This 177-nucleotide RNA was probed chemically with DMS.
The data come from the RNA Mapping Database (RMDB), library OK2TRN.
The RNA was probed in 150 mM KOAc, 10 mM MgCl2 and 150 mM bicine (pH 8.5) at 24 C.
For DMS, 914 sequencing reads were counted.
RNA sequence: GGGAACGACUCGAGUAGAGUCGAAAAUGUAAUGAUGCAGUCAUAGCUCACUGCAGCUUCUAACUCCUGGGCUCAAGUAAUGCUCCUGCCUCAGCCUCUUGAGUAUCUGGGACCGCAGGUGUGUGCCACGCGUCGGUAUGUUCGCAUACCGACGCGUAAAAGAAACAACAACAACAAC
Reactivity to DMS in 0.01 (KOAc 150mM, MgCl2 10mM, bicine 150mM(pH8.5), 24C), signal-to-noise 1, nucleotides 027 to 126: u040g020u010a090a070u010g000a030u000g000c000a000g020u010c150a120u010a150g030c120u000c120a060c010u000g040c000a010g000c070u000u000c030u000a130a060c060u000c000c020u000g000g030g000c050u000c050a040a090g050u000a100a080u000g020c060u010c050c000u000g000c060c020u000c080a080g020c050c080u000c010u030u000g000a040g030u000a100u000c030u000g000g000g000a060c080c030g020c010a090g010g000u000g030u000g020u000g000c020c060